[RMDB]
RNA sequence: GGGAACGACUCGAGUAGAGUCGAAAAGGGUCAGGUCGUUCAUCAUGUUCAAUUCGCGACCCAGGUAAAUGUAGCUGGUGCGUUCGGAUAUGUUUGUUCCAUUGAGCAUGAAUGGGGCAUCCGAGACCAGCGGAUCAUGGUUCGCCAUGAUCCGCUGAAAAGAAACAACAACAACAAC
Reactivity to DMS in 0.01 (KOAc 150mM, MgCl2 10mM, bicine 150mM(pH8.5), 24C), signal-to-noise 1, nucleotides 027 to 126: g000g020g000u010c000a300g000g000u010c050g020u000u040c040a050u000c000a060u000g010u000u000c020a060a000u000u040c150g030c020g000a000c090c070c000a020g000g010u030a040a090a040u000g000u020a120g050c020u010g000g000u000g000c040g010u070u010c060g000g010a020u060a020u010g060u070u150u040g000u020u000c000c020a070u000u000g000a000g010c110a050u020g010a030a070u000g000g000g000g000c040a090u010c000c030g010a060g020a030c000
Reactivity to 2A3 in 0.01 (KOAc 150mM, MgCl2 10mM, bicine 150mM(pH8.5), 24C), signal-to-noise 2, nucleotides 027 to 126: g010g030g000u010c000a000g050g000u030c100g030u130u010c000a010u020c010a010u030g030u000u030c020a030a010u050u050c000g040c010g070a090c000c000c010a000g120g030u070a000a230a260u300g020u200a060g030c000u000g030g030u030g030c040g070u120u180c090g000g000a010u010a100u300g300u100u270u120g200u110u000c000c020a000u000u000g040a000g030c040a050u080g090a000a000u070g000g010g000g080c040a010u080c050c040g010a030g070a080c010
Source: RMDB library OK1LIB, as collected in RNAgym.
An RNA of 177 nucleotides, treated with DMS and 2A3 and read out base by base.
The DMS profile rests on 1,508 reads.
High DMS reactivity at an A or C suggests that its Watson-Crick edge is free.
The 2A3 profile rests on 665 reads.
Values cover nucleotides 27 to 126.
The reactions ran in a buffer of 150 mM KOAc, 10 mM MgCl2 and 150 mM bicine (pH 8.5), at 24 C.